[RMDB]
RNA sequence: GGGAACGACUCGAGUAGAGUCGAAAAGAGCGGAGGAGACUGCGUGAGGCUGGUUUCACAGAGCAGCGUCCACCUCCCGCUUUCGACGGUGGAAGGAUCACGGGCCGGUGCCUUCUGAGCCCACUAUGACCUAAUAAGCUGGUUUCAACUGGACCAAGUACUGAUUUCACUUCGGUGAAAUCAGUACAAAAGAAACAACAACAACAAC
Reactivity to 2A3 in 0.01 (KOAc 150mM, MgCl2 10mM, bicine 150mM(pH8.5), 24C), signal-to-noise 2, nucleotides 027 to 156: g060a010g000c020g000g010a020g000g040a010g040a020c040u140g010c050g100u060g010a050g120g000c040u050g090g030u230u260u220c160a150c000a060g060a030g020c010a000g020c000g030u090c030c040a100c010c000u010c020c050c030g000c000u090u030u060c050g040a050c080g000g030u070g000g050a020a010g010g000a030u130c060a010c070g000g000g010c040c000g030g060u060g040c000c040u060u050c040u110g050a050g000c000c010c010a050c040u050a050u060g040a000c010c000u020a110a150u130a200a070g120c030u040g000g090u070u150u200c120a160a110c120u140g030g090a110c010c010a010a010